The record gives the reactivity of an RNA of 177 nucleotides to DMS and 2A3.
For DMS, 3,542 sequencing reads were counted.
High 2A3 reactivity points to a flexible backbone, as in loops and unpaired stretches.
[RMDB]
RNA sequence: GGGAACGACUCGAGUAGAGUCGAAAAGAUAUGGACCAGGUUGCAAGGCCGGUGUCGGAAACGACACCAGGCUGAUGACCAACUGGUCCUAAGUCAAAACGUAUUUCGCCUUCGGGCGAAAUACGAACUGAUAAUGAUCCUUCGGGAUCAUUAUCAGAAAAGAAACAACAACAACAAC
Reactivity to DMS in 0.01 (KOAc 150mM, MgCl2 10mM, bicine 150mM(pH8.5), 24C), signal-to-noise 3, nucleotides 027 to 126: g000a000u000a020u010g000g000a020c000c010a010g020g030u000u000g000c000a040a030g020g030c010c000g000g010u010g020u000c000g010g010a000a000a040c020g020a040c010a000c010c010a000g040g010c000u000g020a050u010g010a030c300c010a020a050c010u010g000g000u010c000c000u000a000a060g000u010c000a100a080a120a300c010g000u000a000u000u000u000c000g020c000c000u000u010c300g040g020g010c000g000a000a000a000u000a000c000g010a030a140
Reactivity to 2A3 in 0.01 (KOAc 150mM, MgCl2 10mM, bicine 150mM(pH8.5), 24C), signal-to-noise 1, nucleotides 027 to 126: g000a000u020a000u060g010g000a010c020c010a050g260g220u080u020g000c040a060a060g010g000c010c010g010g030u000g000u010c010g000g010a040a010a000c000g000a010c010a010c010c000a000g010g000c030u010g020a150u000g010a000c000c000a000a010c000u010g000g000u000c000c000u010a000a010g000u000c020a050a000a100a150c010g010u020a010u000u020u010c000g000c020c000u070u100c300g110g000g000c000g000a000a010a000u010a000c000g000a040a010